[RMDB]
Conditions: 150 mM KOAc, 10 mM MgCl2 and 150 mM bicine (pH 8.5), 24 C. The record gives the reactivity of an RNA of 177 nucleotides to DMS and 2A3. High 2A3 reactivity points to a flexible backbone, as in loops and unpaired stretches. For 2A3 the reverse transcriptase was SuperScript II with manganese. For DMS, 1,537 sequencing reads were counted.
RNA sequence: GGGAACGACUCGAGUAGAGUCGAAAAGAUAUGGACGACCAACUAGCAACAGCUCGGAAACGAGACAUGCUAUGUUGUGUCGUCCUAAGUCAAAAGCUUUCGUGGGUGUUCGCACCCACGAAAGCAAUCACCAUAAGCUGUUCGCAGCUUAUGGUGAAAAAGAAACAACAACAACAAC
Reactivity to DMS in 0.01 (KOAc 150mM, MgCl2 10mM, bicine 150mM(pH8.5), 24C), signal-to-noise 2, nucleotides 027 to 126: g000a020u010a300u010g010g010a010c000g010a010c000c010a000a100c000u010a010g000c000a010a100c270a130g020c000u010c000g000g000a100a060a230c000g000a000g010a010c100a180u000g010c000u010a010u010g000u000u000g020u000g040u000c000g010u000c000c000u000a060a110g010u030c020a080a060a100a130g000c000u000u000u000c000g000u000g000g000g010u000g010u000u000c170g010c010a000c010c000c000a010c030g000a000a000a000g010c010a050a000
Reactivity to 2A3 in 0.01 (KOAc 150mM, MgCl2 10mM, bicine 150mM(pH8.5), 24C), signal-to-noise 1, nucleotides 027 to 126: g030a040u050a020u180g000g000a000c000g000a000c030c000a030a000c010u010a000g020c010a020a170c080a200g040c000u000c000g060g010a060a070a050c010g000a000g070a090c030a050u060g030c000u010a050u300g020u010u000g020u070g010u000c000g010u000c000c000u000a010a000g020u020c020a000a000a060a150g000c010u020u000u000c020g000u000g020g000g010u000g070u130u150c300g020c100a010c000c000c000a000c000g000a000a000a010g010c000a020a000